This 207-nucleotide RNA was probed chemically with 2A3 and DMS. In probing experiments dimethyl sulfate is read out at A N1 and C N3, which are open when not base-paired.

[RMDB]
RNA sequence: GGGAACGACUCGAGUAGAGUCGAAAAGAGAGGGUAACCACCGGCGCGCGUCACUGAUAUAUCCACCGGGGGGUAAGGGGAGAAAAGGAUGCAGCGCGACGAAGUUAGCACGCUGCCCCGUAAGGCUUGAAGAGUGUAGUGUUCGCACUACACUCAAGACACUUAGAAGUUUCGACUUCUAAGUGUCAAAAGAAACAACAACAACAAC
Reactivity to 2A3 in 0.01 (KOAc 150mM, MgCl2 10mM, bicine 150mM(pH8.5), 24C), signal-to-noise 3, nucleotides 027 to 156: g070a010g000a020g070g030g000u100a120a050c010c040a020c070c000g030g000c030g020c020g000c010g130u050c020a020c090u040g030a040u110a040u050a060u180c020c030a040c070c030g010g000g000g050g000g020u060a070a030g030g050g030g010a040g030a000a090a010a040g030g010a020u130g000c000a010g000c020g010c000g000a030c040g000a080a020g120u110u170a000g020c060a000c050g000c000u010g000c060c000c000c000g000u030a080a090g040g020c050u050u110g080a080a070g000a020g010u010g000u000a000g000u010g030u040u040c080g010c050a000c000u000a000c000a000c000u000c000a000a000
Reactivity to DMS in 0.01 (KOAc 150mM, MgCl2 10mM, bicine 150mM(pH8.5), 24C), signal-to-noise 1, nucleotides 027 to 156: g020a180g000a070g000g000g000u000a120a110c030c000a090c000c020g060g040c030g020c010g010c060g000u020c070a190c080u010g010a110u000a110u000a100u000c090c030a140c040c020g010g000g030g000g020g010u000a030a060g000g020g030g020a100g020a070a040a090a070g000g030a120u000g040c040a020g030c030g030c010g000a140c040g000a070a090g010u010u020a130g000c000a090c010g010c020u000g000c000c080c010c000g000u010a060a120g010g000c080u000u000g010a080a190g000a010g020u010g060u000a040g010u020g000u000u000c270g000c000a010c020u000a020c000a000c010u000c030a000a110

For 2A3 the reverse transcriptase was SuperScript II with manganese.